[RMDB]
RNA sequence: GGGAACGACUCGAGUAGAGUCGAAAACAGUGCAGGAUAUAACCAUGAUGUGUCCAUUCUGCGGGCAUGGAUUCGUACCACCAAGGUCACCGGUGACCAUCCGCUCGUGAUUGAGCGAGUCCGAGCGCGACUUGUAUUCGUUCGCGAAUACAAGUCGAAAAGAAACAACAACAACAAC
Reactivity to 2A3 in 0.01 (KOAc 150mM, MgCl2 10mM, bicine 150mM(pH8.5), 24C), signal-to-noise 2, nucleotides 027 to 126: c010a020g060u020g120c000a000g020g050a010u090a020u020a220a030c060c030a090u100g030a060u120g130u020g000u000c000c010a030u130u040c030u090g060c000g000g040g000c040a060u070g020g000a030u020u060c010g040u040a040c030c050a050c020c060a080a060g070g000u030c020a020c110c040g100g010u040g030a000c030c000a040u040c050c010g000c030u010c010g090u120g020a060u080u110g040a050g090c040g010a030g020u030c000c010g000a000g030c030g010
Reactivity to DMS in 0.01 (KOAc 150mM, MgCl2 10mM, bicine 150mM(pH8.5), 24C), signal-to-noise 2, nucleotides 027 to 126: c080a080g030u010g000c050a110g010g000a070u000a100u000a090a130c110c040a090u030g010a090u000g020u000g000u000c120c060a080u010u000c070u000g010c050g020g000g010c050a040u000g020g000a100u010u000c050g000u000a090c060c040a110c060c090a080a160g000g030u000c010a070c070c060g000g030u010g010a060c040c060a100u010c090c000g020c000u000c060g000u010g000a050u010u000g010a090g010c060g010a060g020u000c000c030g020a020g010c040g000
Source information
Chemical mapping of a 177-nucleotide RNA with 2A3 and DMS. The 2A3 profile rests on 2,400 reads. The RNA was probed in 150 mM KOAc, 10 mM MgCl2 and 150 mM bicine (pH 8.5) at 24 C. In probing experiments dimethyl sulfate is read out at A N1 and C N3, which are open when not base-paired. Source: RMDB library OK2TRN, as collected in RNAgym. Reactivities are given for positions 27 through 126.